[RMDB]
RNA sequence: GGGAACGACUCGAGUAGAGUCGAAAAGAUAUGGAACCCUUUGAGGAGUGUGGUCUAGAACUACGCAGGGAAUCGGAAACGAUUCUCUGCGCUAGACCACACUCCAAUGAUGAGGGUUCCUAAGUCACAGAGAAAUAAACUUCGGUUUAUUUCUCUGAAAAGAAACAACAACAACAAC
Reactivity to DMS in 0.01 (KOAc 150mM, MgCl2 10mM, bicine 150mM(pH8.5), 24C), signal-to-noise 2, nucleotides 027 to 126: g020a030u000a300u010g010g010a020a000c000c000c010u000u000u010g000a160g010g000a010g030u010g010u010g000g000u010c000u000a020g000a130a080c160u020a300c040g000c000a000g010g000g000a010a010u000c000g020g010a100a090a240c000g010a010u010u000c000u000c000u000g000c000g000c020u000a000g000a000c010c000a010c010a010c030u000c000c000a040a030u000g010a200u010g000a000g020g020g020u000u000c000c000u010a010a070g010u000c030a300
Structure probing data (DMS) for a 177-nucleotide construct. Values cover nucleotides 27 to 126. For DMS the reverse transcriptase was MarathonRT. The RNA was probed in 150 mM KOAc, 10 mM MgCl2 and 150 mM bicine (pH 8.5) at 24 C.